[RMDB]
RNA sequence: GGGAACGACUCGAGUAGAGUCGAAAAACACCUAUUCGUAGGUGUAAAAAAGCGUACUACGUGGUGGUACAGCUAGUCGUCUGUCCCAAAUAGGACAGGCGACUUGGACCUGUACGUAACAUCCACGUAUCGCAAAAAACACAUGUUCGCAUGUGAAAGUCUUUGAGAUCUUCGGAUCUCAAAGACUAAAAGAAACAACAACAACAAC
Reactivity to 2A3 in 0.01 (KOAc 150mM, MgCl2 10mM, bicine 150mM(pH8.5), 24C), signal-to-noise 1, nucleotides 027 to 156: a000c000a000c000c000u020a070u030u080c230g110u080a030g010g000u020g040u140a000a120a000a000a200a000g090c090g000u110a110c070u000a020c040g000u000g000g020u010g000g000u000a000c000a010g000c010u000a000g010u000c000g000u000c000u000g000u030c010c010c000a050a300a110u300a010g010g010a000c000a000g020g000c020g000a000c000u000u050g000g010a100c010c000u000g000u000a000c000g040u000a010a010c000a240u130c000c010a000c030g000u000a030u000c060g000c000a010a000a040a000a040a000c020a000c000a000u050g050u100u090c300g080c210a010u010g000u080g050a130a120